[RMDB]
RNA sequence: GGGAACGACUCGAGUAGAGUCGAAAAUCAGCCUGGGAGUUCCUCCGGCCCAGGAUCUGGCGUCGACAGGAGGAUCACCGUCCCACCCGGUCGCGGGGUAGGUCGGGAAAUCUAACAGCGACUGAGCCUGCGCCGGCUUGCCUGCGGGACCGGCGGGGGUAACUAUUGGGUUCGCCCAAUAGUUACCAAAAGAAACAACAACAACAAC
Reactivity to 2A3 in 0.01 (KOAc 150mM, MgCl2 10mM, bicine 150mM(pH8.5), 24C), signal-to-noise 3, nucleotides 027 to 156: u080c000a000g020c000c000u000g000g000g000a020g020u070u030c010c000u000c000c000g020g000c010c000c000a010g010g040a030u130c040u030g030g050c100g140u200c120g170a130c150a270g020g000a000g000g000a000u020c080a010c010c020g070u040c010c000c000a030c000c010c000g000g010u020c030g020c000g210g000g000g010u010a010g000g000u000c000g010g010g050a030a060a020u110c110u130a080a060c000a010g020c010g060a060c060u060g070a040g070c020c090u130g000c040g040c010c000g010g030c030u010u050g040c000c010u100g180c060g030g020g020a040c010c020g000g020c030g000g000g000
Overview:
This 207-nucleotide RNA was probed chemically with 2A3. The reactions ran in a buffer of 150 mM KOAc, 10 mM MgCl2 and 150 mM bicine (pH 8.5), at 24 C. It was measured as part of the RMDB library RSTRND.